[RMDB]
RNA sequence: GGGAACGACUCGAGUAGAGUCGAAAAAACACUAGUAUAUGUGAUUUACUAUAACAAGAUCUUAGUUUUUCCUGUUGGCAAAUGACAUGUAAUAUUUACAGAGGUCUUGGGUUCAGUCCAGCAGAAAUAAUAUCUCCUUAUUCGUAAGGAGAUAUUAAAAAGAAACAACAACAACAAC
Reactivity to DMS in 0.01 (KOAc 150mM, MgCl2 10mM, bicine 150mM(pH8.5), 24C), signal-to-noise 6, nucleotides 027 to 126: a040a030c050a040c070u000a130g010u010a080u010a080u020g010u010g010a150u010u000u000a060c060u000a080u010a090a080c020a020a030g000a030u000c020u000u000a090g030u000u010u000u000u010c080c020u000g010u000u000g000g010c040a070a040a030u010g010a020c040a040u000g000u000a020a080u010a100u010u000u000a030c030a070g010a170g000g010u000c010u000u000g000g010g000u000u000c160a040g010u010c010c010a030g000c040a050g000a080a060a070
Reactivity to 2A3 in 0.01 (KOAc 150mM, MgCl2 10mM, bicine 150mM(pH8.5), 24C), signal-to-noise 2, nucleotides 027 to 126: a010a010c050a020c030u070a050g040u070a140u030a040u280g030u010g050a100u050u130u050a060c040u030a040u080a270a020c010a030a020g010a080u050c020u060u150a030g010u080u000u000u070u050c010c010u020g000u020u020g000g000c020a060a070a150u090g020a010c010a010u020g000u000a040a080u110a250u290u220u050a020c020a020g040a040g080g010u040c000u010u040g050g040g000u110u120c020a030g100u020c000c000a000g000c000a010g060a010a060a000